[RMDB]
RNA sequence: GGGAACGACUCGAGUAGAGUCGAAAAAGCCGGUCUACGGACCGGGAAAACGUUCAUCUCGUUUUACGGGCCGCAUUAAGAUUGAAGCCAAGGAACGGGGACUUCAGACUACGACUACGGUCGUAGAUUACGCCUCCGAGUUUCGACUCGGAGGCAAGUCACGAUAUACCUUCGGGUAUAUCGUGACAAAAGAAACAACAACAACAAC
Reactivity to 2A3 in 0.01 (KOAc 150mM, MgCl2 10mM, bicine 150mM(pH8.5), 24C), signal-to-noise 1, nucleotides 027 to 156: a000g060c000c050g000g000u000c000u000a050c300g010g000a020c000c000g030g000g020a030a200a000a040c050g050u040u010c060a190u020c020u010c030g000u000u000u020u170a060c110g040g010g000c000c010g050c050a040u110u130a170a060g080a160u130u000g010a090a000g040c010c050a030a030g020g000a010a000c000g000g000g000g090a050c000u130u080c140a080g010a150c010u000a010c000g000a000c000u060a050c150g050g020u030c000g010u010a000g000a000u020u070a020c170g000c000c000u000c000c000g000a000g000u030u150u030c090g140a000c010u000c000g000g000a020g000g000c000a000a000